Chemical mapping of a 177-nucleotide RNA with 2A3 and DMS. Reactivities are given for positions 27 through 126. The reactions ran in a buffer of 150 mM KOAc, 10 mM MgCl2 and 150 mM bicine (pH 8.5), at 24 C. As a SHAPE reagent, 2A3 marks flexible, mostly unpaired nucleotides at the ribose 2'-OH. 2A3 adducts were read by reverse transcription with SuperScript II with manganese.
RNA sequence: GGGAACGACUCGAGUAGAGUCGAAAAACGCGCAUGUGUGUCAUGCCCCGAUUGCGUACUGUCCUACAGUACGCAAACGGCUUCUGUAGGACAGAGGCCACGGGUAGUCGGAAACACUGAUUAGCGAGGACAGCAUUCUAUUCGUAGAGUGCUGUCCAAAAGAAACAACAACAACAAC
Reactivity to 2A3 in 0.01 (KOAc 150mM, MgCl2 10mM, bicine 150mM(pH8.5), 24C), signal-to-noise 4, nucleotides 027 to 126: a010c020g010c010g000c010a020u050g060u020g040u060g110u170c000a010u020g010c000c000c000c000g120a140u010u040g000c000g000u000a010c000u010g030u140c030c020u060a040c000a000g000u000a000c000g000c000a000a000a000c020g000g000c000u000u000c000u000g050u060a110g080g220a010c000a000g010a000g010g000c000c010a010c010g000g000g000u010a020g030u040c020g020g030a130a240a050c060a010c020u030g010a060u040u040a010g010c010g010a050
Reactivity to DMS in 0.01 (KOAc 150mM, MgCl2 10mM, bicine 150mM(pH8.5), 24C), signal-to-noise 9, nucleotides 027 to 126: a100c030g010c020g010c020a030u010g010u000g020u000g010u000c010a070u010g010c020c010c000c010g010a300u000u000g000c010g020u010a020c000u000g000u010c140c080u000a140c010a010g010u000a010c030g010c000a000a010a090c130g020g000c010u000u000c000u000g000u000a120g020g040a300c010a010g000a030g000g000c000c020a200c050g010g000g010u000a030g010u000c040g000g010a300a120a040c100a020c010u000g000a060u000u000a070g010c020g000a160